[RMDB]
RNA sequence: GGGAACGACUCGAGUAGAGUCGAAAAGGUUGAUUCGUCAACCAUUUAAUCCUAAGUCCUCCAACAGCACACUUUGUCAGCUGCCAUCGGAAACGAUGGACAGCUUGGAUUUAAGUGUGACAUGGAGGAUAUGGACCGAGGCACGUUUCGACGUGAAAAAUCAGCAUAGGUUCGCCUAUGCUGAUUUAAAAGAAACAACAACAACAAC
Reactivity to 2A3 in 0.01 (KOAc 150mM, MgCl2 10mM, bicine 150mM(pH8.5), 24C), signal-to-noise 4, nucleotides 027 to 156: g010g010u000u000g000a030u070u110c140g050u010c070a000a010c000c000a010u030u050u090a080a050u020c010c000u020a130a060g020u000c000c000u000c010c000a080a060c060a230g070c000a000c000a000c010u010u010u020g000u010c000a010g000c000u000g010c000c000a000u010c000g030g000a100a010a020c010g000a000u000g000g040a130c010a000g020c000u010u050g050g000a010u100u060u300a010a010g000u010g010u000g050a020c000a050u030g000g000a020g000g000a000u000a000u010g000g000a010c030c040g040a150g030g140c010a000c030g020u060u160u160c210g070a020c020g010u040g050a230a040
Reactivity to DMS in 0.01 (KOAc 150mM, MgCl2 10mM, bicine 150mM(pH8.5), 24C), signal-to-noise 2, nucleotides 027 to 156: g030g020u000u000g010a050u000u000c210g030u010c000a020a030c000c010a130u000u000u010a030a060u000c000c000u000a130a300g020u000c010c000u000c010c000a020a170c050a250g030c000a020c020a010c010u000u000u000g040u020c010a040g000c000u000g000c000c000a030u000c010g000g020a190a170a290c020g040a030u000g030g020a040c000a000g030c000u000u010g040g020a040u000u010u010a010a030g010u000g020u010g000a020c060a300u000g000g000a020g040g030a000u000a010u000g000g010a020c050c030g010a300g030g020c030a030c020g030u000u000u000c100g010a040c050g010u000g010a020a060